[RMDB]
RNA sequence: GGGAACGACUCGAGUAGAGUCGAAAAACUUCUACUACACUGGAACUGGACCCGAAGCAGCACUCCCAUUCCGGGCUGUUAAGGAUGGCAUCGUUUGGGUCCAUGAAGAUGGCGCCACUGAUGCUCCGGGUUGCUGGAAGUUCGCUUCCAGCAACCCAAAAGAAACAACAACAACAAC
Reactivity to 2A3 in 0.01 (KOAc 150mM, MgCl2 10mM, bicine 150mM(pH8.5), 24C), signal-to-noise 1, nucleotides 027 to 126: a000c030u040u010c050u140a020c000u020a000c080a040c070u070g080g000a020a010c060u000g020g020a030c000c010c010g010a040a040g050c100a000g060c020a020c130u120c110c000c000a000u300u000c030c040g000g010g000c010u170g000u060u280a070a030g050g030a030u200g110g000c000a000u000c030g060u040u050u050g090g010g000u000c020c000a020u050g030a020a080g210a020u000g070g000c060g110c000c000a000c110u080g000a050u020g000c000u020c020c000